[RMDB]
RNA sequence: GGGAACGACUCGAGUAGAGUCGAAAAUCGCGGUGGACAGUGCUCAAAAGUUUGAGCUGGCGCGUUGGAGGGUGGGGCGGGUGUGGGGGAGGCCCAACGGUUUGGCAAACUUUAUUCAUUUGCCGCGCAGUUAUUAAAAGUUCGCUUUUAAUAACUGAAAAGAAACAACAACAACAAC
Reactivity to DMS in 0.01 (KOAc 150mM, MgCl2 10mM, bicine 150mM(pH8.5), 24C), signal-to-noise 2, nucleotides 027 to 126: u000c030g010c030g010g040u020g000g000a150c150a090g030u020g030c000u000c010a040a020a220a150g010u040u000u010g000a030g010c000u000g000g000c080g000c060g000u040u010g010g010a130g010g000g000u080g010g000g000g030c140g000g000g000u010g000u000g000g000g000g010g010a130g000g000c010c000c000a040a190c140g000g010u000u000u010g010g000c050a030a050a020c080u000u010u020a080u020u020c130a050u000u010u010g000c000c000g000c090g000
Reactivity to 2A3 in 0.01 (KOAc 150mM, MgCl2 10mM, bicine 150mM(pH8.5), 24C), signal-to-noise 2, nucleotides 027 to 126: u090c000g000c020g030g060u070g050g010a030c010a080g070u020g050c000u020c020a020a020a020a080g020u010u000u040g010a000g000c000u000g010g020c010g010c000g040u030u100g050g000a030g020g000g070u200g010g030g000g050c040g000g000g000u110g000u030g000g020g000g000g030a030g000g000c000c000c000a020a020c030g050g020u050u070u060g010g000c010a000a000a010c020u100u110u070a060u060u050c050a050u010u000u030g000c000c000g000c010g000